[RMDB]
RNA sequence: GGGAACGACUCGAGUAGAGUCGAAAAGAGGAAUAGCGUUUGCAGAAUAUCAUCGCGAUGGUGACCAAGCGCGAUUUUGGUGGCUCCCAGUUCAGUCGCGGUGCGGUAUAAAAUCCCACGGCGCAAGCUGGGAUACAGCAUUCGUGCUGUAUCCCAGAAAAGAAACAACAACAACAAC
Reactivity to 2A3 in 0.01 (KOAc 150mM, MgCl2 10mM, bicine 150mM(pH8.5), 24C), signal-to-noise 2, nucleotides 027 to 126: g120a010g020g080a030a040u030a060g010c010g030u030u040u110g020c070a030g100a220a070u140a030u140c020a010u010c010g020c090g170a080u240g010g090u030g040a060c030c010a040a020g000c000g010c000g000a010u000u000u030u110g120g030u070g030g050c010u030c020c000c010a000g000u100u100c080a020g080u120c000g000c000g070g010u030g010c110g050g000u080a100u040a150a100a010a040u030c000c000c000a000c010g100g000c000g000c020a030a000g000
Reactivity to DMS in 0.01 (KOAc 150mM, MgCl2 10mM, bicine 150mM(pH8.5), 24C), signal-to-noise 4, nucleotides 027 to 126: g030a160g010g000a040a060u000a100g010c010g000u000u000u010g020c160a120g010a110a120u000a130u000c050a040u000c010g020c170g030a100u000g010g020u000g020a060c150c020a040a040g030c020g010c020g010a060u000u000u000u000g010g020u010g000g000c110u000c020c000c010a100g010u010u010c110a070g020u010c010g030c020g010g050u010g000c110g000g000u000a300u000a020a030a040a060u000c010c000c000a050c040g000g020c020g010c040a110a030g000
The record gives the reactivity of an RNA of 177 nucleotides to 2A3 and DMS. DMS adducts were read by reverse transcription with MarathonRT. For 2A3, 2,623 sequencing reads were counted. The DMS profile rests on 3,262 reads. The RNA was probed in 150 mM KOAc, 10 mM MgCl2 and 150 mM bicine (pH 8.5) at 24 C.